[RMDB]
RNA sequence: GGGAACGACUCGAGUAGAGUCGAAAAGAUAUGGACCGUACGGAGCUUUGAUCUAUGGAUCGGAAACGAUCCUGUAGGGAGCUCGUACGGUCCUAAGUCAAAACCCUGUCACUUCGGUGACAGGGAACAUAAAAUAAAGCUUCGGCUUUAUUUUAUGAAAAGAAACAACAACAACAAC
Reactivity to 2A3 in 0.01 (KOAc 150mM, MgCl2 10mM, bicine 150mM(pH8.5), 24C), signal-to-noise 1, nucleotides 027 to 126: g030a000u000a010u040g000g000a010c000c010g000u000a000c140g280g120a040g020c030u300u300u040g020a000u000c000u010a050u090g000g020a010u010c000g000g000a000a000a010c010g000a000u000c000c020u000g000u010a000g000g000g000a010g000c010u020c010g000u000a000c000g000g000u010c000c000u000a000a000g000u000c000a030a020a000a000c000c010c000u000g030u010c010a020c020u040u060c300g160g000u010g000a010c000a000g000g000g000a000a010
Reactivity to DMS in 0.01 (KOAc 150mM, MgCl2 10mM, bicine 150mM(pH8.5), 24C), signal-to-noise 3, nucleotides 027 to 126: g010a010u000a010u020g000g000a010c000c000g010u000a000c010g030g020a020g020c000u000u000u030g000a010u010c010u000a020u000g010g010a010u000c000g010g010a000a000a020c010g010a010u000c010c010u010g010u000a000g020g000g010a000g020c000u000c000g010u010a000c000g000g010u000c000c000u000a000a070g000u010c010a110a100a130a190c010c000c000u000g000u000c000a000c000u000u020c250g040g010u000g000a010c000a010g000g010g010a020a050